RNA sequence: GGGAACGACUCGAGUAGAGUCGAAAAUCCCCUGUGAGGAACUACUGUCUUCACGCAGAAAGCGUCUAGCCAUGGCGUUAGUAUGAGUGUCGUGCAGCCUCCAGGACCCCCCCUCCCGGGAGAGCCAUAGUGGUCUGCGGAACCGGUGAGUACACCGCAAUCAUUGAAUCUUCGGAUUCAAUGAUUGAAAAGAAACAACAACAACAAC
Reactivity to 2A3 in 0.01 (KOAc 150mM, MgCl2 10mM, bicine 150mM(pH8.5), 24C), signal-to-noise 4, nucleotides 027 to 156: u040c070c010c000c010u040g200u190g030a020g020g010a060a040c080u190a030c000u300g010u010c000u000u000c010a000c000g000c000a000g000a000a010a000g000c000g010u030c030u070a050g070c060c040a080u160g000g000c000g010u010u000a010g010u000a010u000g020a030g050u010g000u000c030g100u170g080c010a000g000c000c000u000c000c000a010g010g010a050c010c010c020c000c010c010c000u010c010c000c000g010g010g010a080g000a000g010c010c020a050u090a090g120u120g080g020u030c050u070g070c030g030g020a030a050c020c000g000g050u070g030a030g040u070a040c050a020c040c030g000
Reactivity to DMS in 0.01 (KOAc 150mM, MgCl2 10mM, bicine 150mM(pH8.5), 24C), signal-to-noise 4, nucleotides 027 to 156: u010c040c020c000c020u010g010u000g010a060g010g010a090a080c040u010a300c020u010g010u000c020u000u000c000a020c000g000c010a010g000a170a250a300g000c010g020u000c010u000a140g020c270c300a210u000g010g010c000g010u010u000a110g010u010a100u010g000a020g010u000g010u000c020g000u020g010c010a030g000c010c030u000c000c000a060g010g000a260c010c010c000c000c010c000c020u000c020c040c040g010g020g010a090g010a140g000c050c010a130u000a080g030u000g020g010u000c030u000g010c020g000g010a120a070c020c000g010g030u000g000a130g020u000a090c020a030c020c040g000